[RMDB]
RNA sequence: GGGAACGACUCGAGUAGAGUCGAAAAAUGCCGCAUUCAGUGACGGUUACUCUAGUGGGCAACUGUCGAUCUAGCGUUGACAUCUACAUACUAUAUAGUAAUACCAAUACUCAAGACUACGAAACGGCCGUGAUGCAGGAUUCGUCCUGCAUCACGGAAAAGAAACAACAACAACAAC
Reactivity to 2A3 in 0.01 (KOAc 150mM, MgCl2 10mM, bicine 150mM(pH8.5), 24C), signal-to-noise 2, nucleotides 027 to 126: a000u170g000c030c000g000c010a060u150u100c130a000g060u000g070a040c000g000g000u030u060a000c000u000c000u020a000g040u150g050g040g000c060a130a020c040u000g000u040c000g030a070u000c060u070a000g050c000g060u000u110g030a060c090a100u000c030u080a050c020a120u080a000c070u000a000u110a080u050a160g040u060a000a110u030a180c000c040a060a000u080a070c000u020c030a000a100g000a100c070u020a110c080g060a070a060a000c010g090g010
Reactivity to DMS in 0.01 (KOAc 150mM, MgCl2 10mM, bicine 150mM(pH8.5), 24C), signal-to-noise 1, nucleotides 027 to 126: a060u000g000c000c000g110c000a080u000u110c070a020g060u000g050a010c180g000g000u000u050a000c020u000c180u040a300g080u000g000g000g000c070a000a040c000u000g000u000c000g000a110u000c060u130a070g000c000g000u000u000g000a050c070a120u000c040u000a160c010a080u000a130c130u000a120u060a170u000a080g050u000a000a110u020a050c110c040a100a120u000a000c000u000c060a170a110g000a000c150u000a000c010g000a000a060a270c140g000g020
This 177-nucleotide RNA was probed chemically with 2A3 and DMS.
For DMS, 865 sequencing reads were counted.
For DMS the reverse transcriptase was MarathonRT.
For 2A3, 1,231 sequencing reads were counted.
The RNA was probed in 150 mM KOAc, 10 mM MgCl2 and 150 mM bicine (pH 8.5) at 24 C.